RNA sequence: GGGAACGACUCGAGUAGAGUCGAAAACUAAGCAAUGAAGAUGACACUUGAGAGAGGUUCCACUCUGCAGAGACAUCUUCACCGUCAGGUGGCGCGCUGGAUUACGAUCGCUGGGGGGUUGGGAUAGAGUCUUGCUAGAAUUCGUUCUAGCAAGACUAAAAGAAACAACAACAACAAC
Reactivity to 2A3 in 0.01 (KOAc 150mM, MgCl2 10mM, bicine 150mM(pH8.5), 24C), signal-to-noise 4, nucleotides 027 to 126: c050u080a050a020g120c030a030a150u070g020a000a010g000a000u010g040a060c020a030c150u020u090g010a030g000a000g000a010g110g060u220u150c070c000a090c000u010c010u040g020c010a020g010a000g050a160c000a010u000c000u030u000c000a000c010c000g110u100c040a050g010g060u050g040g000c000g000c000g000c030u020g030g020a040u060u110a060c050g030a030u070c040g000c060u030g000g020g010g000g000g020u040u040g040g000g010a020u050a060g130
Reactivity to DMS in 0.01 (KOAc 150mM, MgCl2 10mM, bicine 150mM(pH8.5), 24C), signal-to-noise 5, nucleotides 027 to 126: c050u000a090a110g020c110a140a130u010g000a050a030g010a020u000g000a150c230a070c010u010u010g010a150g010a000g000a070g000g000u020u040c180c080a140c000u010c000u000g010c060a220g010a060g020a100c020a010u010c010u000u000c000a090c120c090g020u010c060a060g010g010u000g000g020c100g010c090g000c040u000g000g010a070u000u020a090c120g000a080u010c040g020c060u010g000g000g000g000g000g010u040u030g010g000g010a110u020a090g000
This 177-nucleotide RNA was probed chemically with 2A3 and DMS. Conditions: 150 mM KOAc, 10 mM MgCl2 and 150 mM bicine (pH 8.5), 24 C. For 2A3 the reverse transcriptase was SuperScript II with manganese. It was measured as part of the RMDB libraries RFM100 and RFMREP.